Source: RMDB library OK3TST, as collected in RNAgym. The record gives the reactivity of an RNA of 207 nucleotides to 2A3 and DMS. The DMS profile rests on 1,412 reads.
[RMDB]
RNA sequence: GGGAACGACUCGAGUAGAGUCGAAAAUAAGAUGGCCUAAUAUCUGGACUAUCAGGACAAAAAUCAGUCUUAUGGUAUGGUUUUGAUAUAGAUCCAACCAUACAGAUCUAUUCAAUUGGAUAUUCAUCUAGCUAUAGUAAUUUCAGCCUAAAUUUGCCACGCUUACACUUUUCGAAGUGUAAGCGUGAAAAGAAACAACAACAACAAC
Reactivity to 2A3 in 0.01 (KOAc 150mM, MgCl2 10mM, bicine 150mM(pH8.5), 24C), signal-to-noise 3, nucleotides 027 to 156: u210a030a030g040a030u030g030g000c010c010u050a060a060u010a030u020c050u030g040g040a080c030u030a040u090c040a020g040g000a020c070a040a170a030a020a060u170c070a030g010u000c010u030u070a030u060g010g010u060a120u110g010g060u040u040u070u070g080a050u070a010u030a180g060a040u010c020c000a000a060c040c020a030u040a060c080a010g010a010u010c000u030a060u060u060c040a090a040u110u050g020g000a000u010a040u090u100c010a010u010c020u070a010g000c010u070a050u030a120g060u070a050a130u050u140u100c070a030g020c000c020u070a100a130a090u040u040u080g040c040
Reactivity to DMS in 0.01 (KOAc 150mM, MgCl2 10mM, bicine 150mM(pH8.5), 24C), signal-to-noise 1, nucleotides 027 to 156: u020a110a130g020a110u000g020g020c050c000u000a160a040u020a020u000c090u000g030g000a050c060u020a030u000c030a100g050g000a210c050a020a020a080a050a100u000c120a090g000u000c050u010u000a020u020g020g050u040a090u000g010g000u000u000u000u020g010a190u000a110u000a060g020a040u000c000c030a050a200c090c260a090u000a050c120a050g000a020u010c050u010a030u000u000c060a030a160u000u000g000g020a050u000a180u020u000c080a080u000c040u070a090g010c020u000a040u010a050g020u000a070a050u000u000u000c080a060g010c000c000u020a030a130a250u000u000u000g020c060